RNA sequence: GGGAACGACUCGAGUAGAGUCGAAAACGGCGACGUCGCGGUCCUCGCGGCCGAGGAGGGCAUGGUUUACGUCUGCCUCGUCGCCUGGACGGCCGCCGGCAAGGCCUCGGCCCCGUCCGCGGUCGGCGCGGUCGCGGUCCCGGCCCCGGCUAAUGCCUGAACACACACUUUUCGAAGUGUGUGUUCAAAAAGAAACAACAACAACAAC
Reactivity to 2A3 in 0.01 (KOAc 150mM, MgCl2 10mM, bicine 150mM(pH8.5), 24C), signal-to-noise 2, nucleotides 027 to 156: c030g030g020c010g010a030c090g060u160c130g040c040g060g000u010c000c020u020c010g010c040g020g020c120c090g020a020g000g050a060g040g040g040c050a080u180g170g190u200u190u240a090c090g010u010c020u000g080c020c000u010c000g000u000c010g000c020c000u000g020g000a000c030g090g000c020c010g000c000c000g000g000c040a130a030g020g020c010c000u020c000g000g000c010c010c000c010g030u010c020c000g020c030g030g010u300c160g010g130c000g000c020g000g010u010c010g020c050g000g000u010c020c000c020g020g000c010c000c000c010g010g000c030u080a080a050u220g010c020c040